Description
This 177-nucleotide RNA was probed chemically with DMS. It was measured as part of the RMDB library OK2TRN. The reactions ran in a buffer of 150 mM KOAc, 10 mM MgCl2 and 150 mM bicine (pH 8.5), at 24 C.
[RMDB]
RNA sequence: GGGAACGACUCGAGUAGAGUCGAAAAUGAUCGAGAGAUCUAAGUAUGUACGCGAGUCAAGUGCACAGACUCGAGCGAAAGCUCGGUCGAAAGACCGCGUACAUGCGACGGCAAGUGUACAGUCGAAGGGAUGGACCUAGUUCGCUAGGUCCAUCCCAAAAGAAACAACAACAACAAC
Reactivity to DMS in 0.01 (KOAc 150mM, MgCl2 10mM, bicine 150mM(pH8.5), 24C), signal-to-noise 1, nucleotides 027 to 126: u000g000a000u010c000g020a180g000a250g000a000u010c020u030a080a220g010u000a000u000g000u010a000c000g000c000g000a040g000u000c000a040a030g020u000g010c070a010c020a300g000a000c000u000c000g010a000g020c000g000a150a200a150g020c000u000c000g020g020u000c000g000a120a030a180g030a000c000c010g000c000g030u000a000c000a030u000g000c020g000a060c060g000g010c000a050a030g030u000g010u000a060c010a300g000u010c020g000a130a120